[RMDB]
RNA sequence: GGGAACGACUCGAGUAGAGUCGAAAAAUAGUGAUGCCAUCACACCAAAAGAAGUUGAUAACAUGGUGUUUGUACAGGCAUGGUCAGCUGAUUUCACUGAAUUCAGGAAGGGCAUACUUUCGUUAUGCAUCGCAGCACCGUUCGCGGUGCUGCGAUGAAAAGAAACAACAACAACAAC
Reactivity to DMS in 0.01 (KOAc 150mM, MgCl2 10mM, bicine 150mM(pH8.5), 24C), signal-to-noise 1, nucleotides 027 to 126: a020u010a030g060u010g030a010u000g050c020c000a240u000c060a050c050a070c060c050a050a070a050a090g000a090a100g010u020u020g000a120u000a080a110c090a130u000g010g030u000g010u000u000u000g020u050a050c050a140g030g010c050a020u000g010g000u010c060a010g000c000u000g020a090u000u000u000c050a220c200u000g050a100a070u020u030c030a140g000g010a110a110g020g000g020c000a050u010a010c040u020u010u010c110g010u020u000a060u000g030